Chemical mapping of a 207-nucleotide RNA with DMS and 2A3. The DMS profile rests on 8,711 reads. Conditions: 150 mM KOAc, 10 mM MgCl2 and 150 mM bicine (pH 8.5), 24 C. Reactivities are given for positions 27 through 156.
RNA sequence: GGGAACGACUCGAGUAGAGUCGAAAAGCGUACUACUACACCGCGUAGCGUUGAAAUAACGCUACCCACCAGCUCCCAAAUAGGAGCUGAGGCGUUAUGGAGCUACUGAAUGGUGUAGUAUCGCAAAGGGAUAAUGCACUUCGGUGCAUUAUCCCAACUUCUAAACAACGUUCGCGUUGUUUAGAAGAAAAGAAACAACAACAACAAC
Reactivity to DMS in 0.01 (KOAc 150mM, MgCl2 10mM, bicine 150mM(pH8.5), 24C), signal-to-noise 4, nucleotides 027 to 156: g030c010g020u000a050c090u000a020c010u020a020c000a020c000c000g040c210g010u000a010g030c000g010u000u010g000a200a140a050u000a000a000c010g030c020u010a010c030c020c020a300c180c010a010g020c000u000c000c000c020a040a220a240u000a050g020g010a010g010c000u010g010a060g000g010c000g000u000u000a000u000g010g010a300g000c000u000a020c010u010g020a090a130u010g020g040u010g010u000a020g010u000a000u000c020g000c010a080a080a150g000g030g020a020u000a010a010u000g000c000a000c000u000u000c280g040g030u010g020c000a000u000u000a000u000c010c000c000a000a000
Reactivity to 2A3 in 0.01 (KOAc 150mM, MgCl2 10mM, bicine 150mM(pH8.5), 24C), signal-to-noise 7, nucleotides 027 to 156: g010c010g040u080a080c040u000a000c000u010a000c020a000c010c000g020c030g020u010a000g000c010g130u170u070g020a020a020a010u000a000a000c000g000c000u040a060c030c000c000a060c000c000a000g000c010u030c000c030c020a200a300a120u300a100g000g000a000g000c000u000g000a010g010g000c000g000u000u000a000u010g020g010a020g020c000u020a020c060u140g160a210a150u220g000g000u010g010u000a000g000u000a000u030c000g000c010a050a060a030g000g000g000a000u000a000a000u010g010c000a000c030u070u100c300g040g010u000g000c000a000u000u000a000u000c000c000c000a000a000